[RMDB]
RNA sequence: GGGAACGACUCGAGUAGAGUCGAAAACUCUUACCAUGGUGUACCGUGACGAUGAGACGCGUUGUAUUCGUCUGUCGUCGCGAUUUCCGCAGUUCAUCUAAUGUCGUUGGCGGUAGGGGAAUUGCAGCCUGGACCAUACUUUCGAGUAUGGUCCAGGAAAAGAAACAACAACAACAAC
Reactivity to 2A3 in 0.01 (KOAc 150mM, MgCl2 10mM, bicine 150mM(pH8.5), 24C), signal-to-noise 2, nucleotides 027 to 126: c000u000c000u030u110a080c050c060a140u210g120g000u130g050u070a050c060c010g020u020g020a000c020g030a010u090g300a000g000a040c000g020c040g120u070u120g170u190a260u090u030c000g040u000c010u010g010u010c000g030u010c010g000c000g010a010u010u040u050c020c040g000c000a020g010u030u040c010a010u000c050u060a050a030u070g020u040c100g280u090u240g020g000c040g000g060u020a030g030g000g010g000a010a010u020u040g010c010a030g110
Reactivity to DMS in 0.01 (KOAc 150mM, MgCl2 10mM, bicine 150mM(pH8.5), 24C), signal-to-noise 1, nucleotides 027 to 126: c030u000c070u000u000a130c140c050a070u000g000g000u010g020u000a030c100c000g020u000g000a010c010g000a010u000g000a030g010a000c020g020c300g000u010u000g020u000a150u010u000c000g020u000c000u000g000u000c000g000u000c000g040c000g000a080u010u000u000c030c080g000c040a060g020u000u000c050a050u000c030u000a020a110u000g010u000c020g000u000u010g050g020c000g000g000u000a030g000g000g000g000a050a050u010u010g030c020a220g010

The data come from the RNA Mapping Database (RMDB), library OK2TST. Chemical mapping of a 177-nucleotide RNA with 2A3 and DMS. 2A3 adducts were read by reverse transcription with SuperScript II with manganese. Reactivities are given for positions 27 through 126.